[RMDB]
RNA sequence: GGGAACGACUCGAGUAGAGUCGAAAACGUUGUCAUCGACAACACCCUAUGCAUUCAUGCUCUGUAAGGAAGCGCCGAAAGGUGAGCAAGCCCGAGUUGCCCAGACCUGAAAUGCAACACUUUAGAGAAAACCCGAAGCAGUUCGCUGCUUCGGGAAGAUUAUGUUACCCUUCGGGGUAACAUAAUCAAAAGAAACAACAACAACAAC
Reactivity to DMS in 0.01 (KOAc 150mM, MgCl2 10mM, bicine 150mM(pH8.5), 24C), signal-to-noise 1, nucleotides 027 to 156: c090g000u000u010g040u010c070a140u000c030g020a110c030a020a090c030a100c010c030c040u040a180u010g000c040a120u000u000c040a110u000g000c070u000c010u010g020u000a080a170g010g050a080a120g010c110g020c020c060g000a110a090a130g050g020u000g000a300g040c080a110a150g000c010c020c020g020a090g000u000u000g030c000c000c030a070g000a040c050c060u010g000a010a100a100u000g010c030a050a110c090a060c050u020u000u000a050g010a100g000a110a050a080a130c020c000c020g040a000a010g010c020a030g020u010u040c300g040c030u020g010c030u020u000c000g020g000g000a000a000
Reactivity to 2A3 in 0.01 (KOAc 150mM, MgCl2 10mM, bicine 150mM(pH8.5), 24C), signal-to-noise 3, nucleotides 027 to 156: c090g000u000u000g010u020c100a300u110c300g010a000c000a000a000c000a070c010c000c000u050a140u120g020c010a000u030u020c020a010u060g010c050u000c010u030g070u150a050a030g030g040a080a020g010c010g000c020c000g070a110a060a020g050g000u110g050a050g080c050a070a050g010c040c010c000g120a110g070u080u180g050c020c020c000a020g020a020c010c000u020g020a080a050a050u040g010c000a080a000c020a020c060u190u210u230a110g010a000g000a080a100a030a030c000c000c000g000a000a000g000c020a000g010u040u100c140g040c160u010g000c000u000u000c000g020g010g000a000a000